An RNA of 177 nucleotides, treated with 2A3 and DMS and read out base by base. The RNA was probed in 150 mM KOAc, 10 mM MgCl2 and 150 mM bicine (pH 8.5) at 24 C.
RNA sequence: GGGAACGACUCGAGUAGAGUCGAAAAUAGUUAGGCGUCAGGUAAGAGAUAAUGCAUGGCUUCCAAGCUACAAAAUGCAUCAAAGAAGCCCGAACCAAGGAAAGCAAUCCACAGAGCAAUUGUCGGACAUACAAUGUUUUUUCGAAAACAUUGUAUGAAAAGAAACAACAACAACAAC
Reactivity to 2A3 in 0.01 (KOAc 150mM, MgCl2 10mM, bicine 150mM(pH8.5), 24C), signal-to-noise 5, nucleotides 027 to 126: u110a020g050u040u050a040g020g010c020g030u020c040a010g020g070u060a110a020g040a020g010a150u070a170a010u100g010c030a040u040g010g000c000u110u000c030c030a060a020g010c000u010a010c030a000a080a010a020u090g010c010a020u030c070a060a120a100g070a050a010g040c000c020c030g010a010a000c020c020a030a010g050g010a080a070a000g020c010a010a040u010c010c010a020c020a040g060a020g060c050a080a120u110u080g060u040c050g020g000a010
Reactivity to DMS in 0.01 (KOAc 150mM, MgCl2 10mM, bicine 150mM(pH8.5), 24C), signal-to-noise 9, nucleotides 027 to 126: u010a070g010u000u000a060g020g010c140g020u000c030a040g000g010u010a060a080g010a110g010a100u010a090a060u010g010c040a050u000g010g000c010u000u010c160c200a090a130g020c020u000a120c140a050a060a140a060u000g000c020a040u000c120a050a110a120g000a080a070g010c040c010c050g010a060a090c080c040a040a070g000g000a070a070a090g010c060a050a060u000c030c020a040c070a070g000a090g010c090a050a070u000u010g010u000c070g010g010a210